[RMDB]
RNA sequence: GGGAACGACUCGAGUAGAGUCGAAAAGAUAUGGAAUACCACUUUUGACGAUCGACGGUUCGGAAACGAACCCAAGAUCGAUAAGUGGUUCCUAAGUCAAACUGUUUGCCCUUCGGGGCAAACAGAACUGACUAGGAGCGUUCGCGCUCCUAGUCAGAAAAGAAACAACAACAACAAC
Reactivity to DMS in 0.01 (KOAc 150mM, MgCl2 10mM, bicine 150mM(pH8.5), 24C), signal-to-noise 1, nucleotides 027 to 126: g000a040u000a300u000g000g000a040a060u000a060c010c000a000c000u000u020u040u000g000a230c230g000a000u000c000g000a300c300g000g000u000u000c000g020g020a060a180a160c060g000a000a000c020c000c010a060a300g010a000u000c020g000a130u000a000a040g040u000g000g000u000u000c000c000u000a010a050g020u000c020a050a070a250c000u000g000u000u000u000g000c000c000c020u000u020c170g000g000g000g020c010a000a000a050c020a000g000a040a280